[RMDB]
RNA sequence: GGGAACGACUCGAGUAGAGUCGAAAAGAGAUGUAGUUCGCUACAUCUCAAACAUAUACAUGAGAAAAUGCAACGGAGGCACCGAAGCCAUAAAAGUAAAAAAAAGUACGUUGUUCGCAACGUACAACAGAUAGCAUGUGUUCGCACAUGCUAUCUGAAAAGAAACAACAACAACAAC
Reactivity to 2A3 in 0.01 (KOAc 150mM, MgCl2 10mM, bicine 150mM(pH8.5), 24C), signal-to-noise 3, nucleotides 027 to 126: g000a000g000a010u010g000u000a010g020u020u060c230g010c110u000a000c010a000u000c000u000c000a000a000a010c010a010u240a010u060a100c060a050u140g050a030g080a140a090a080a030u070g010c020a040a000c050g050g000a040g070g000c030a020c050c030g050a030a000g000c020c010a020u130a050a130a020a010g130u190a110a010a020a020a010a000a010a030g000u010a000c000g000u000u000g000u000u010c180g000c070a000a000c000g010u000a000c000a000a000
Reactivity to DMS in 0.01 (KOAc 150mM, MgCl2 10mM, bicine 150mM(pH8.5), 24C), signal-to-noise 2, nucleotides 027 to 126: g010a010g010a000u000g000u010a010g010u010u000c230g000c010u000a000c000a000u000c000u000c010a030a060a070c150a070u000a070u020a070c130a090u010g030a080g000a050a050a050a060u020g010c040a030a110c030g010g000a150g000g010c020a050c060c040g000a020a090g020c060c060a100u010a020a050a090a120g030u050a000a010a000a110a050a040a040a070g020u010a000c010g000u000u010g000u000u000c210g000c000a010a000c000g000u000a000c000a060a050
Notes:
Structure probing data (2A3 and DMS) for a 177-nucleotide construct. DMS adducts were read by reverse transcription with MarathonRT. The data come from the RNA Mapping Database (RMDB), library M2PK50.